[RMDB]
RNA sequence: GGGAACGACUCGAGUAGAGUCGAAAAGCACCGAUCGGAGCUGUUCAACAGUUUGCGCUGUCGGCCGAUCUCUGCCAGAGCAUGAUGUACAGCGACAACGCAGCUCUAUUGCAGGAGGUUGAUGACCACUCAGCCGAUGCUUCGGCAUCGGCUGAGUAAAAGAAACAACAACAACAAC
Reactivity to 2A3 in 0.01 (KOAc 150mM, MgCl2 10mM, bicine 150mM(pH8.5), 24C), signal-to-noise 1, nucleotides 027 to 126: g000c000a000c000c000g030a000u030c060g120g000a060g000c000u000g000u180u240c080a000a050c000a140g000u040u080u030g020c000g000c000u000g000u000c060g030g050c000c000g280a300u070c150u000c000u030g120c020c230a080g030a020g000c060a120u230g060a080u060g120u170a030c000a000g030c030g010a110c090a000a000c110g070c000a020g000c000u000c050u000a000u000u080g110c110a080g060g070a180g090g000u050u000g000a060u290g090a080c110c000